[RMDB]
RNA sequence: GGGAACGACUCGAGUAGAGUCGAAAAACGCACCGCUGGUCAUGCUCAGAGGUAUCCAUAGGCCUAGGUCGGCCACUAUCCAGUAGGGCGGGAAGUAGUACGCCCAGACUAUCACGUGCUGUGCCAGACCUUCCUCCACUUUCGAGUGGAGGAAGGUAAAAGAAACAACAACAACAAC
Reactivity to DMS in 0.01 (KOAc 150mM, MgCl2 10mM, bicine 150mM(pH8.5), 24C), signal-to-noise 2, nucleotides 027 to 126: a060c100g020c060a080c040c020g050c060u010g030g020u000c080a060u000g010c040u010c090a040g000a050g000g000u000a080u000c040c070a110u000a050g010g000c020c010u010a080g000g000u010c090g000g010c000c050a140c080u000a110u000c080c020a060g010u000a120g000g000g000c020g020g020g010a070a140g000u000a080g010u000a100c050g010c010c000c000a090g000a060c020u000a030u010c060a160c100g020u000g000c050u000g000u000g000c070c060a070g000
Reactivity to 2A3 in 0.01 (KOAc 150mM, MgCl2 10mM, bicine 150mM(pH8.5), 24C), signal-to-noise 1, nucleotides 027 to 126: a000c020g010c000a030c000c040g000c030u060g000g070u050c020a060u120g000c010u010c060a010g000a030g060g040u060a050u100c020c000a080u070a130g000g070c000c000u080a090g020g180u080c040g030g000c000c000a000c000u040a050u080c020c010a000g040u070a140g030g010g000c000g030g010g010a120a020g070u200a010g050u030a040c000g000c000c000c030a010g000a010c020u040a030u150c030a010c150g050u060g000c020u030g030u050g060c030c010a040g030